Source: RMDB library OK3TST, as collected in RNAgym. Structure probing data (2A3) for a 207-nucleotide construct. For 2A3, 580 sequencing reads were counted. The RNA was probed in 150 mM KOAc, 10 mM MgCl2 and 150 mM bicine (pH 8.5) at 24 C. Values are in units of 0.01, from 0 to 300, in steps of 10.

RNA sequence: GGGAACGACUCGAGUAGAGUCGAAAACAGGUACCGCAGACUCGCCCUUAAGCACCACCCGUUGAAGUCAAAUGAGCCGUCUUCAGCAGAGAUUUUCAGGCAAAUAGCAGAGGCCUACGACGUGCUGAGUGACCGUGAGUAGGUGUGGGGCUGAGCACUAGCAGUACCUCUUCGGAGGUACUGCUAGAAAAGAAACAACAACAACAAC
Reactivity to 2A3 in 0.01 (KOAc 150mM, MgCl2 10mM, bicine 150mM(pH8.5), 24C), signal-to-noise 1, nucleotides 027 to 156: c020a000g050g050u060a040c010c060g110c100a020g040a250c010u010c010g050c010c020c000u040u230a110a000g010c010a010c000c020a020c000c010c010g000u040u100g120a070a010g010u110c110a110a090a160u260g000a050g090c060c000g030u000c020u000u000c010a010g000c030a020g060a050g010a140u090u130u120u230c040a010g010g000c040a060a060a080u120a100g040c140a050g000a030g130g040c000c000u040a030c100g110a020c020g010u020g000c000u020g000a120g040u010g000a020c010c010g000u020g030a070g050u140a160g000g000u020g060u160g000g020g000g000c030u220g000a010g010c000a010